[RMDB]
RNA sequence: GGGAACGACUCGAGUAGAGUCGAAAAUAUACUUUUGAUGAUGUUCACAAGUCAAUAGAAACAAUUGAGUAUAUGAGCCAUUCAUUCAUGCUGAAAGAUGAUGUGUAUAUUCCAAAGUUGAAGAAAGAAAGAAUUGUUGCAAUUCUUGAAUGGGAGAAGAAAUUGUACAGUUCGCUGUACAAUUUCUAAAAGAAACAACAACAACAAC
Reactivity to 2A3 in 0.01 (KOAc 150mM, MgCl2 10mM, bicine 150mM(pH8.5), 24C), signal-to-noise 2, nucleotides 027 to 156: u080a030u070a060c010u060u060u130u130g040a060u040g040a030u080g040u120u080c040a050c040a090a110g010u020c010a020a050u090a120g170a130a110a010c070a040a120u070u040g020a010g020u060a040u030a050u100g010a010g000c040c000a020u090u030c000a000u030u050c010a030u130g030c030u090g080a170a060a100g050a100u040g000a030u040g040u000g040u030a020u010a020u140u150c060c010a200a010a060g010u150u130g060a070a050g030a060a190a000g060a050a060a020g020a090a160u020u010g010u000u000g000c010a030a030u020u000c000u000u010g040a070a040u140g060g090g030a110g050a170
Reactivity to DMS in 0.01 (KOAc 150mM, MgCl2 10mM, bicine 150mM(pH8.5), 24C), signal-to-noise 2, nucleotides 027 to 156: u010a070u000a060c040u010u010u030u000g030a090u010g020a120u010g040u000u000c060a140c080a070a280g060u000c030a070a100u010a060g000a190a110a110c050a050a170u000u000g000a050g000u020a030u000a030u000g010a110g030c040c040a090u010u000c030a080u000u000c030a080u010g060c070u010g010a070a090a170g010a060u000g020a020u010g000u000g010u000a060u000a050u000u000c040c030a070a070a150g000u000u000g020a070a050g000a050a050a120g010a100a070a080g010a060a080u010u000g000u000u000g030c020a080a180u000u000c010u010u000g010a090a070u000g000g030g000a120g040a120